[RMDB]
RNA sequence: GGGAACGACUCGAGUAGAGUCGAAAAGAUAUGGAGGGAGUCUCAAGGUUGCUAUGUAUCGGAAACGAUACAAACGCAACCCUGAGACAUCGAUCUCCUAAGUCAAACUAGGCGUUCGCGCCUAGAAGCUUAUACGUCUCUUCGGAGACGUAUAAGCAAAAGAAACAACAACAACAAC
Reactivity to 2A3 in 0.01 (KOAc 150mM, MgCl2 10mM, bicine 150mM(pH8.5), 24C), signal-to-noise 2, nucleotides 027 to 126: g010a020u090a030u110g000g010a000g020g060g000a020g010u000c010u000c010a000a010g010g000u000u000g000c000u020a010u080g020u010a020u010c000g010g000a120a040a010c010g000a010u010a000c000a000a010a010c070g000c010a000a000c000c000c000u000g010a010g000a000c000a010u050c000g010a040u010c000u000c000c000u020a120a020g080u060c060a050a080a110c040u000a000g000g030c000g070u040u110c300g030c000g060c180c000u010a000g010a020a000
Reactivity to DMS in 0.01 (KOAc 150mM, MgCl2 10mM, bicine 150mM(pH8.5), 24C), signal-to-noise 3, nucleotides 027 to 126: g020a020u000a300u010g000g000a050g020g000g010a040g030u000c000u010c000a010a030g000g010u000u010g010c000u010a300u010g020u020a000u000c000g000g010a110a100a180c010g000a010u000a000c000a020a020a160c300g000c000a010a010c010c000c050u000g010a010g000a000c020a050u000c110g000a060u010c000u000c000c000u000a040a100g000u000c040a100a150a300c000u000a020g000g020c000g000u000u010c250g010c010g020c010c000u000a000g000a090a120